[RMDB]
RNA sequence: GGGAACGACUCGAGUAGAGUCGAAAAGUCUCCCAAGAAGAACCAGGAACACCUCAAGAAGAGGAGACUUCCCCAAGGGUAGGUGGAACGCCAGGGAACAAGGAAAUAGGAGAAGGAACGGUAGAAAGGAGUGAUAACUUCGGUUAUCACAAAAGAAACAACAACAACAAC
Reactivity to DMS in 0.01 (KOAc 150mM, MgCl2 10mM, bicine 150mM(pH8.5), 24C), signal-to-noise 9, nucleotides 027 to 129: g030u030c050u010c010c000c000a120a090g030a070a050g000a080a090c100c070a040g000g040a060a090c140a070c090c030u030c120a100a090g020a080a090g000a070g000g030a070g020a050c010u000u000c060c020c000c120a080a090g020g000g050u040a060g020g040u020g050g020a060a070c000g050c080c030a090g000g000g030a020a080c090a020a020g000g000a010a050a040u030a060g030g010a060g030a040a030g010g010a020a040c120g010g020u050a060g030a020a040a030g010g000a150
Reactivity to 2A3 in 0.01 (KOAc 150mM, MgCl2 10mM, bicine 150mM(pH8.5), 24C), signal-to-noise 9, nucleotides 027 to 129: g010u020c020u010c030c000c020a010a010g060a020a010g020a020a030c050c030a030g030g030a050a030c040a080c040c020u050c050a040a080g060a050a020g030a100g020g000a010g000a010c000u030u020c010c000c000c010a060a080g050g010g030u090a050g010g060u070g030g040a040a010c050g040c030c020a000g000g010g000a030a010c040a070a020g050g000a010a030a040u120a050g010g010a030g020a040a030g020g000a030a030c040g030g010u050a040g070a040a090a020g100g040a070